[RMDB]
RNA sequence: GGGAACGACUCGAGUAGAGUCGAAAAGAGUAAAUUGAUUAAAGUCGAUUUGCCUGCACCUGUAGGCCCUACAAUUGCUACCUUGGAACUCGCAGGAACAGAAAAAUUAAUAUCCUUCAGUAAGGGCCAUGAGUGGGAGUUUCGACUCCCACUCAUGAAAAGAAACAACAACAACAAC
Reactivity to DMS in 0.01 (KOAc 150mM, MgCl2 10mM, bicine 150mM(pH8.5), 24C), signal-to-noise 4, nucleotides 027 to 126: g000a100g010u000a000a000a010u000u000g010a020u000u030a110a150a300g000u000c000g000a000u000u000u000g000c030c000u000g010c270a110c030c010u010g030u000a110g020g020c020c000c000u000a050c070a070a090u030u000g010c060u030a060c050c080u010u020g000g000a070a080c130u000c120g060c020a010g000g030a110a070c110a070g010a050a040a050a060a100u030u010a080a080u020a080u010c000c030u000u010c110a080g000u020a090a050g000g000g020c040
Reactivity to 2A3 in 0.01 (KOAc 150mM, MgCl2 10mM, bicine 150mM(pH8.5), 24C), signal-to-noise 4, nucleotides 027 to 126: g100a000g010u060a020a040a000u020u050g090a030u160u260a110a110a090g090u010c000g000a020u000u010u090g030c010c040u050g000c020a040c000c010u030g110u140a050g010g030c000c000c000u050a050c060a090a110u050u110g000c000u070a100c020c010u020u090g050g020a060a050c000u020c040g030c010a010g050g030a100a030c070a070g160a070a140a000a010a000u190u100a070a050u120a100u200c000c000u080u060c010a060g030u080a090a070g000g000g000c000